[RMDB]
RNA sequence: GGGAACGACUCGAGUAGAGUCGAAAAGGAAUUGGAAGGUCAUCCUUCACAGCAUCGUGUGGAAGUCCUGCUCGGGGCGGAAGCAUUAAAACCAUUCGAGCUAGUCAAUGCGUGGCGUGUCUCUCCGGUGUUUCUCUGGACUUCGGUCCAGAGAAAAACGGAAGUAUACUUUCGAGUAUACUUCCGUAAAAGAAACAACAACAACAAC
Reactivity to DMS in 0.01 (KOAc 150mM, MgCl2 10mM, bicine 150mM(pH8.5), 24C), signal-to-noise 3, nucleotides 027 to 156: g020g000a080a090u000u010g000g010a070a050g030g020u000c100a120u000c030c010u010u000c020a140c060a110g000c060a090u000c060g030u010g000u000g020g010a270a180g000u000c020c030u010g000c090u000c080g010g000g020g020c060g020g010a260a180g020c070a090u000u000a050a060a100a120c030c020a110u010u000c050g010a080g030c020u000a100g000u000c050a040a070u010g000c040g030u000g000g010c050g020u010g000u000c010u000c030u000c010c030g010g020u000g000u000u000u000c010u000c000u000g020g000a050c010u000u010c300g060g050u020c000c010a010g010a020g010a010a010a010a110
Reactivity to 2A3 in 0.01 (KOAc 150mM, MgCl2 10mM, bicine 150mM(pH8.5), 24C), signal-to-noise 6, nucleotides 027 to 156: g040g020a040a100u150u120g050g030a020a020g020g040u200c070a130u210c040c000u040u040c060a070c020a060g080c010a050u110c040g030u030g000u020g050g040a050a040g010u020c010c020u050g060c090u070c080g000g010g020g000c030g000g010a020a000g010c010a010u020u210a040a050a010a070c030c010a010u040u100c050g010a010g020c050u080a020g060u040c040a070a090u100g050c050g040u010g010g000c020g020u060g050u010c010u000c010u020c060c040g060g010u030g050u040u040u000c000u000c000u000g000g000a000c000u020u040c230g050g000u000c000c000a000g000a000g000a010a000a000a000
Conditions: 150 mM KOAc, 10 mM MgCl2 and 150 mM bicine (pH 8.5), 24 C. This 207-nucleotide RNA was probed chemically with DMS and 2A3. It was measured as part of the RMDB library M2RFPK. For DMS the reverse transcriptase was MarathonRT. The 2A3 profile rests on 5,510 reads.